Chemical mapping of a 177-nucleotide RNA with 2A3 and DMS. Reactivities are given for positions 27 through 126. The RNA was probed in 150 mM KOAc, 10 mM MgCl2 and 150 mM bicine (pH 8.5) at 24 C. Values are in units of 0.01, from 0 to 300, in steps of 10.
[RMDB]
RNA sequence: GGGAACGACUCGAGUAGAGUCGAAAAACUGCCUGUUUCGACAGGCAGUAGUCUACUUCGCGCAACCGCCGAGUCCUUCCCGCGGUUGCGUGAAGUAGUUUGAUAUGAUCUUAUUCGUAAGAUCAAAUGUGACAUACAGAUUCGUCUGUAUGUCACAAAAAGAAACAACAACAACAAC
Reactivity to 2A3 in 0.01 (KOAc 150mM, MgCl2 10mM, bicine 150mM(pH8.5), 24C), signal-to-noise 2, nucleotides 027 to 126: a010c000u010g000c010c000u000g000u000u100u090c240g080a020c000a000g010g030c000a000g000u010a000g000u000c000u000a000c010u000u010c000g000c020g000c010a000a000c010c000g100c020c060g100a030g120u130c000c050u080u050c000c010c000g000c000g000g000u000u000g000c000g010u010g000a000a000g010u000a000g000u010u040u090g050a040u040a080u150g000a000u010c000u020u030a050u060u100c250g050u040a000a000g000a000u000c010a000a070a050
Reactivity to DMS in 0.01 (KOAc 150mM, MgCl2 10mM, bicine 150mM(pH8.5), 24C), signal-to-noise 2, nucleotides 027 to 126: a030c000u000g010c000c000u000g010u000u000u010c160g020a080c000a000g000g010c000a000g000u000a020g020u000c010u000a010c000u000u000c000g000c020g020c010a020a010c010c010g010c030c160g010a090g000u020c110c140u000u000c020c010c050g010c020g000g000u000u000g000c000g010u000g000a000a010g000u000a000g010u000u000u000g000a110u000a130u000g000a010u000c000u000u000a030u000u010c160g020u000a000a010g010a000u000c000a020a070a090
The 2A3 profile rests on 2,841 reads.